[RMDB]
RNA sequence: GGGAACGACUCGAGUAGAGUCGAAAAUAGAGUCAAGCCUCGGGGCUUUAUACCAAACUUAGAGGAUCGCAUCUUGUACCCUGUUCGUCGGGUCACUGGGUGUUAAAACAAUAGACGAUAUCUAAGCAUGUAGUAUUCUCGAGUGUAGUGCUGGCGGCGUAUCUCUGAGGUUCGCCUCAGAGAUACGAAAAGAAACAACAACAACAAC
Reactivity to DMS in 0.01 (KOAc 150mM, MgCl2 10mM, bicine 150mM(pH8.5), 24C), signal-to-noise 1, nucleotides 027 to 156: u000a070g000a140g010u010c040a070a050g010c010c010u010c000g060g030g000g040c030u000u070u000a030u030a230c010c040a080a130a090c080u000u010a040g020a030g020g040a040u000c070g000c030a090u000c030u020u000g040u000a110c000c000c010u000g030u010u000c060g040u030c090g080g000g030u000c110a030c000u000g000g000g060u010g010u000u000a080a060a060a080c100a030a080u000a090g040a050c050g000a080u000a140u000c040u000a020a130g030c000a110u000g000u010a060g020u000a020u010u000c050u000c000g010a070g000u010g000u000a040g000u000g000c000u000g000g010c080g000g030
Reactivity to 2A3 in 0.01 (KOAc 150mM, MgCl2 10mM, bicine 150mM(pH8.5), 24C), signal-to-noise 2, nucleotides 027 to 156: u080a000g040a010g010u000c000a030a000g010c000c010u010c030g000g000g020g000c020u050u140u120a070u040a020c000c020a070a100a050c100u180u180a060g000a000g080g020a040u010c010g000c000a020u020c010u010u000g030u020a010c000c000c010u030g070u100u050c030g050u020c020g030g000g000u000c010a000c010u020g000g030g000u020g010u040u040a030a030a000a060c080a010a030u020a040g010a000c020g010a010u010a040u100c050u050a040a020g040c030a040u160g060u100a040g030u050a090u140u050c060u030c090g040a080g040u100g020u090a060g040u040g020c030u030g000g050c040g030g010